[RMDB]
RNA sequence: GGGAACGACUCGAGUAGAGUCGAAAAGGACUGCGCAGUCCGGCAACAUCAGCAGAGAGCCCGCUAUACGUGACGGAUUGGCUGAAGCGUACAGAAAUAUUGAGCCUCCUGCAAGAGGCAGCCAAGCAAAACGUACGUGAGUUCGCUCACGUACGAACAAUAUUGAACUCUUCGGAGUUCAAUAUUGAAAAGAAACAACAACAACAAC
Reactivity to 2A3 in 0.01 (KOAc 150mM, MgCl2 10mM, bicine 150mM(pH8.5), 24C), signal-to-noise 5, nucleotides 027 to 156: g020g010a010c010u050g030c140g030c120a030g010u000c000c000g020g020c010a050a050c020a130u140c020a020g020c040a010g090a000g010a010g110c030c030c020g000c040u060a070u010a100c060g050u060g050a010c030g050g060a100u050u040g030g020c030u040g020a070a010g020c010g030u040a030c020a040g140a090a180a030u300a100u170u150g040a040g020c010c000u020c000c020u070g070c050a090a020g000a010g060g000c000a000g000c020c010a040a010g010c060a040a070a060a040c010g000u000a000c000g000u010g000a010g000u040u150c190g020c110u010c000a000c000g010u000a000c010g000a000a000
Reactivity to DMS in 0.01 (KOAc 150mM, MgCl2 10mM, bicine 150mM(pH8.5), 24C), signal-to-noise 3, nucleotides 027 to 156: g040g010a030c020u000g030c130g010c110a120g020u000c030c000g010g000c060a070a100c090a080u010c030a160g000c020a080g020a110g010a130g000c050c010c030g010c030u000a130u000a040c060g030u000g000a300c090g010g020a230u000u000g030g000c020u010g010a050a300g010c050g000u010a150c020a080g000a090a060a140u000a140u010u000g010a110g000c020c010u000c020c000u000g010c120a100a120g000a050g000g040c020a020g020c020c030a050a130g000c080a050a050a080a120c020g040u000a010c000g000u010g010a030g050u000u010c300g040c020u010c000a010c000g010u000a010c000g000a010a080

An RNA of 207 nucleotides, treated with 2A3 and DMS and read out base by base.
Source: RMDB library M2RFPK, as collected in RNAgym.
Values cover nucleotides 27 to 156.
Conditions: 150 mM KOAc, 10 mM MgCl2 and 150 mM bicine (pH 8.5), 24 C.